[RMDB]
This 177-nucleotide RNA was probed chemically with DMS and 2A3.

RNA sequence: GGGAACGACUCGAGUAGAGUCGAAAACGGGAGGAAAUGAACCGCGCUGGCGCCUUGGAAUUAUUAAUGCCUAUCGUUCAGCCAGCCAGUUUGUGGCAAGAGUCGGGGCGGUGGGAGGCCUACGGCAACUAGGAUGGUAGUUCGCUACCAUCCUAGUAAAAGAAACAACAACAACAAC
Reactivity to DMS in 0.01 (KOAc 150mM, MgCl2 10mM, bicine 150mM(pH8.5), 24C), signal-to-noise 4, nucleotides 027 to 126: c120g000g000g010a130g010g010a120a120a050u000g000a060a050c030c030g000c200g010c010u000g010g000c010g000c070c060u000u000g010g000a070a050u010u000a140u010u010a110a100u010g000c080c010u000a050u000c080g010u010u010c080a180g000c030c020a030g000c020c020a020g020u000u000u000g000u000g020g000c110a090a100g010a140g000u000c040g000g000g000g000c070g000g010u010g000g000g000a120g000g000c020c020u000a050c080g000g010c080a080
Reactivity to 2A3 in 0.01 (KOAc 150mM, MgCl2 10mM, bicine 150mM(pH8.5), 24C), signal-to-noise 4, nucleotides 027 to 126: c020g000g010g010a100g020g030a130a090a050u110g020a030a020c020c010g030c040g010c020u000g000g010c030g020c040c000u040u070g030g040a070a030u120u080a090u140u170a300a060u180g050c010c010u070a080u120c040g080u160u090c020a010g000c020c000a010g000c000c000a000g020u050u130u110g100u050g060g000c070a080a020g060a020g090u050c030g000g000g030g000c030g020g010u170g030g030g000a030g120g000c010c010u060a080c040g020g000c020a040
The DMS profile rests on 5,813 reads. Reactivities are given for positions 27 through 126.